[RMDB]
RNA sequence: GGGAACGACUCGAGUAGAGUCGAAAAAAAAGAUAUGGAUGGUACUACCCACCAUAGACGUCGCGAUGAAAGUAUUCGGAAACGAAUACUGGAGCGACAACUAUGAGGUACCAUCCUAAGUCAAAAAGUUUAGUAAUCAGUUCGCUGAUUACUAAACAAAAGAAACAACAACAACAAC
Reactivity to 2A3 in 0.01 (KOAc 150mM, MgCl2 10mM, bicine 150mM(pH8.5), 24C), signal-to-noise 2, nucleotides 027 to 126: a000a010a000a050g190a080u230a070u180g000g000a000u000g000g010u010a010c010u130a130c000c000c030a020c020c000a010u010a010g000a010c090g000u000c000g020c010g300a300u020g010a010a040a000g000u000a010u000u010c000g030g040a010a100a080c010g000a010a000u000a020c000u010g020g000a020g000c000g000a010c000a000a000c000u000a000u010g010a010g000g000u000a000c000c000a000u000c000c000u010a000a010g080u070c090a120a010a050a070a060
Reactivity to DMS in 0.01 (KOAc 150mM, MgCl2 10mM, bicine 150mM(pH8.5), 24C), signal-to-noise 3, nucleotides 027 to 126: a080a070a060a140g010a070u010a150u010g000g000a030u000g010g010u000a000c000u000a130c020c010c000a300c150c000a020u000a010g000a090c300g000u000c010g010c000g000a120u020g000a150a110a020g000u000a000u000u000c000g000g000a150a090a140c010g000a000a010u000a000c010u000g020g000a100g010c000g020a000c000a080a140c010u000a000u000g010a100g000g000u010a020c000c000a000u000c000c000u000a010a120g000u000c160a060a070a120a160a110